[RMDB]
RNA sequence: GGGAACGACUCGAGUAGAGUCGAAAAGGGGUCAAGAUGAGCUUUGUUCUUUCCUGAUGAGCAGCCAUUUAAUAAAAUGGGGAGCAGGAUACCAGCUAUAAAAAUAGGUGUGUAUUUAUUAGCCAUUAUUACAGUCCUGUUUAUGAUAAAGAUAGUGGUGCGUAGUUUUAUUCGUAAAACUACGCACAAAAGAAACAACAACAACAAC
Reactivity to DMS in 0.01 (KOAc 150mM, MgCl2 10mM, bicine 150mM(pH8.5), 24C), signal-to-noise 1, nucleotides 027 to 156: g000g010g050g030u000c050a100a110g040a070u010g010a150g020c080u020u000u010g030u020u000c020u010u000u020c020c030u000g000a140u010g000a080g010c060a070g020c020c000a030u010u000u010a020a180u030a040a030a040a080u000g020g030g010g020a180g010c070a050g000g000a040u000a060c070c040a080g000c020u000a020u010a030a140a050a140a190u000a000g000g000u030g000u010g010u000a040u000u010u000a090u000u000a120g000c010c020a090u000u010a020u020u000a080c090a090g000u010c050c020u000g000u020u000u000a040u010g020a100u000a050a060a160g000a130u020a080g020u000g020
Reactivity to 2A3 in 0.01 (KOAc 150mM, MgCl2 10mM, bicine 150mM(pH8.5), 24C), signal-to-noise 2, nucleotides 027 to 156: g070g010g010g000u020c020a010a040g030a110u050g020a060g040c030u130u150u120g010u100u000c010u070u050u050c000c030u030g060a110u020g020a020g040c010a010g010c000c010a010u050u080u160a290a130u230a090a070a000a010u040g010g000g000g020a020g010c050a040g030g040a020u000a050c000c010a000g090c000u030a030u040a160a190a070a090a030u060a010g070g000u050g000u020g000u030a050u010u170u010a110u020u050a030g000c030c010a010u030u060a030u030u050a100c030a010g020u020c020c020u010g010u070u090u020a030u080g040a080u110a090a140a080g090a030u150a080g120u180g150